[RMDB]
RNA sequence: GGGAACGACUCGAGUAGAGUCGAAAACAGCUGCUUUCGAGCAGCUGAAAAAGAUAUGGACGUACAUAACUUUUGACGAGCGUGAUGGUCGGAAACGACCAUACGCUCGAUAAGUUGGGUACGUCCUAAGUCAAAAACAGUGGGUUCGCCCACUGAACCUCAUAUCUCUAUUCGUAGAGAUAUGAGGAAAAGAAACAACAACAACAAC
Reactivity to DMS in 0.01 (KOAc 150mM, MgCl2 10mM, bicine 150mM(pH8.5), 24C), signal-to-noise 3, nucleotides 027 to 156: c000a020g010c010u000g010c010u000u000u000c300g040a050g050c000a010g030c000u000g010a010a060a070a120a150g010a110u010a300u010g010g020a040c000g030u000a020c010a040u000a010a020c010u000u010u000u000g020a250c130g000a010g010c000g020u000g010a040u000g050g000u000c000g020g000a140a100a260c020g010a010c020c010a010u000a010c000g030c000u010c000g000a020u000a010a040g020u000u000g000g000g030u000a000c000g000u000c000c010u000a000a050g020u010c040a090a080a100a080a060c020a010g030u000g010g050g040u000u000c300g020c010c010c000a000c000u000g000a020a100
Reactivity to 2A3 in 0.01 (KOAc 150mM, MgCl2 10mM, bicine 150mM(pH8.5), 24C), signal-to-noise 7, nucleotides 027 to 156: c000a000g010c010u010g010c000u080u080u230c270g090a010g000c000a000g000c000u000g000a000a010a000a010a000g060a020u070a030u100g000g000a000c000g000u000a000c000a030u020a010a010c010u040u060u110u210g280a150c030g000a000g010c000g000u160g260a050u010g000g000u000c010g020g030a110a070a050c010g000a000c000c000a000u000a000c000g000c000u000c000g000a010u000a000a000g000u000u010g060g000g000u000a000c010g010u000c000c000u000a000a000g000u000c010a010a010a000a060a080c000a000g010u030g000g040g030u070u100c200g160c020c000c000a000c000u000g000a000a030
Source information: Conditions: 150 mM KOAc, 10 mM MgCl2 and 150 mM bicine (pH 8.5), 24 C. An RNA of 207 nucleotides, treated with DMS and 2A3 and read out base by base. For 2A3 the reverse transcriptase was SuperScript II with manganese.